The data come from the RNA Mapping Database (RMDB), library ARCHII. The record gives the reactivity of an RNA of 207 nucleotides to 2A3. 2A3 adducts were read by reverse transcription with SuperScript II with manganese.
[RMDB]
RNA sequence: GGGAACGACUCGAGUAGAGUCGAAAAGCAGUAGCUGCGUAGAACUCUCUCAUAGAGUCGCUUACCUCUGACCUGACUCCGUUAAGGACUCGGAGGUACCAACCCCAACGGAUGCCCUUAAUAGCUACCUCUGGUUGGCUGUUGAGCUAAGACUACACUCGUAUGCGUAGUUCGCUACGCAUACGAGAAAAGAAACAACAACAACAAC
Reactivity to 2A3 in 0.01 (KOAc 150mM, MgCl2 10mM, bicine 150mM(pH8.5), 24C), signal-to-noise 1, nucleotides 027 to 156: g020c000a020g060u300a040g050c130u070g000c020g100u080a030g060a160a090c000u060c000u030c020u000c050a180u130a250g000a010g000u000c010g000c020u010u100a040c000c000u000c000u000g000a000c000c000u000g020a000c000u010c020c010g000u000u020a010a030g050g000a030c100u000c090g000g000a000g000g020u010a030c010c000a050a100c020c000c000c100a020a000c000g030g000a000u010g010c000c030c000u000u000a000a000u000a020g000c000u010a010c000c070u150c080u140g000g050u180u150g000g040c000u000g010u000u000g010a010g000c000u050a020a050g150a090c080u140a030c190a030